[RMDB]
RNA sequence: GGGAACGACUCGAGUAGAGUCGAAAAAAACGACACAGCUGGAGCAGUUGGUUCAAAUGUAGAGAGGGAAAAUCAAAGAAAACAGCCUAGGUGAAGAGAAGAUGUGUCUAGAAUGGCUAUAUGAGAGCAUAGAAUAGGCUUUCGAGCCUAUUCUAUGAAAAGAAACAACAACAACAAC
Reactivity to DMS in 0.01 (KOAc 150mM, MgCl2 10mM, bicine 150mM(pH8.5), 24C), signal-to-noise 5, nucleotides 027 to 126: a040a040a080c110g020a070c050a050c070a050g010c030u000g000g010a070g020c050a060g010u000u010g020g000u010u000c110a040a070a080u010g010u000a050g010a090g010a070g010g000g000a060a050a060a050u010c080a060a070a080g010a060a070a070a100c100a040g000c040c020u000a060g010g010u010g010a070a080g000a070g000a070a050g010a050u010g000u000g000u000c030u000a070g000a070a060u000g010g020c030u000a050u000a060u000g000a130g010a070g000
Reactivity to 2A3 in 0.01 (KOAc 150mM, MgCl2 10mM, bicine 150mM(pH8.5), 24C), signal-to-noise 1, nucleotides 027 to 126: a000a000a000c070g040a030c050a000c000a090g080c010u050g020g010a040g000c030a020g020u120u040g040g000u030u070c050a040a080a080u170g080u140a030g020a000g000a040g100g000g040a000a090a030a010u050c060a100a000a070g090a020a090a040a020c060a000g020c000c020u040a030g070g010u040g020a070a050g020a030g010a060a000g020a040u070g040u020g030u060c010u000a020g080a050a040u140g000g000c010u020a010u010a020u290g070a070g000a010g130